[RMDB]
RNA sequence: GGGAACGACUCGAGUAGAGUCGAAAAGCAGCUACUCGCUAUAUGAUAACUAGCACGUUAGUUAUCAUCACUGAGACACGUUUCAGUGAAGUUAUGAUCGCGUGCUCGUAACUUAUAGGCGGUAGAAGAUACGAUACAGAUUCGUUUGUGUUGUAUCAAAAGAAACAACAACAACAAC
Reactivity to 2A3 in 0.01 (KOAc 150mM, MgCl2 10mM, bicine 150mM(pH8.5), 24C), signal-to-noise 9, nucleotides 027 to 126: g070c040a010g020c000u000a000c010u030c080g000c000u000a000u000a000u050g060a040u030a120a010c000u000a000g000c010a000c050g010u030u080a040g010u040u070a040u010c000a000u000c000a000c000u000g010a000g020a010c020a010c080g060u010u030u010c010a000g000u000g010a030a000g020u050u040a030u030g010a010u010c000g000c010g010u010g000c000u000c000g010u010a020a020c000u010u010a000u010a020g150g030c010g000g000u000a000g010a010a010
Reactivity to DMS in 0.01 (KOAc 150mM, MgCl2 10mM, bicine 150mM(pH8.5), 24C), signal-to-noise 9, nucleotides 027 to 126: g010c110a130g000c010u000a000c000u040c040g020c010u000a020u000a000u000g000a050u010a080a030c010u000a010g010c030a030c070g010u010u020a100g020u020u020a010u000c020a040u000c000a000c000u000g000a010g010a030c070a110c300g020u000u000u000c010a000g010u000g000a040a040g010u020u020a040u000g000a030u010c100g010c050g000u000g000c030u000c060g000u000a060a060c060u000u000a010u000a030g010g010c010g000g000u000a010g010a090a090
Chemical mapping of a 177-nucleotide RNA with 2A3 and DMS. Conditions: 150 mM KOAc, 10 mM MgCl2 and 150 mM bicine (pH 8.5), 24 C.